[RMDB]
RNA sequence: GGGAACGACUCGAGUAGAGUCGAAAAUGAAUAUUCAGUCCGCUAAGAGUUGACCGGACAUUUAUCUGCAAGACCAUUAGCCAACAGAUCUGGUAAUGGUCAAAACCCCAGAUAUGCCAUUGCCUCCUUUGCAUGGUCAGCUGGAGAACUGGAGCAAAUACGUGGUUGUAUUCGUACAACCACGUAUAAAAGAAACAACAACAACAAC
Reactivity to DMS in 0.01 (KOAc 150mM, MgCl2 10mM, bicine 150mM(pH8.5), 24C), signal-to-noise 2, nucleotides 027 to 156: u000g010a090a120u000a040u000u000c010a050g000u010c000c030g000c050u000a140a150g010a070g040u000u000g010a050c020c010g030g000a040c020a020u010u000u000a020u010c070u010g000c040a110a190g000a030c010c010a040u000u000a100g060c020c000a040a240c070a190g010a150u020c150u010g020g020u000a030a000u000g030g010u000c010a030a020a050a270c050c020c130c000a040g000a030u000a060u010g000c000c020a130u010u010g010c030c060u010c110c090u000u020u030g030c010a070u000g010g020u000c010a080g000c030u010g000g020a090g020a000a050c020u010g010g000a060g050c090a050a080
Reactivity to 2A3 in 0.01 (KOAc 150mM, MgCl2 10mM, bicine 150mM(pH8.5), 24C), signal-to-noise 3, nucleotides 027 to 156: u130g030a010a050u080a070u130u110c040a030g020u030c020c040g010c090u100a110a020g030a070g150u030u060g040a070c040c010g020g000a020c030a040u090u080u040a030u000c030u030g050c080a120a120g010a020c000c000a010u010u020a040g210c010c000a070a040c060a160g080a150u050c050u030g000g000u020a000a000u000g000g000u000c000a010a040a000a000c040c000c010c000a010g010a060u050a070u070g040c010c030a070u060u170g020c030c010u110c020c030u140u150u160g040c020a030u070g030g000u080c030a030g030c020u060g020g050a040g020a050a020c020u050g000g020a050g040c010a030a160
This 207-nucleotide RNA was probed chemically with DMS and 2A3.
DMS adducts were read by reverse transcription with MarathonRT.
It was measured as part of the RMDB library OK3TST.
Conditions: 150 mM KOAc, 10 mM MgCl2 and 150 mM bicine (pH 8.5), 24 C.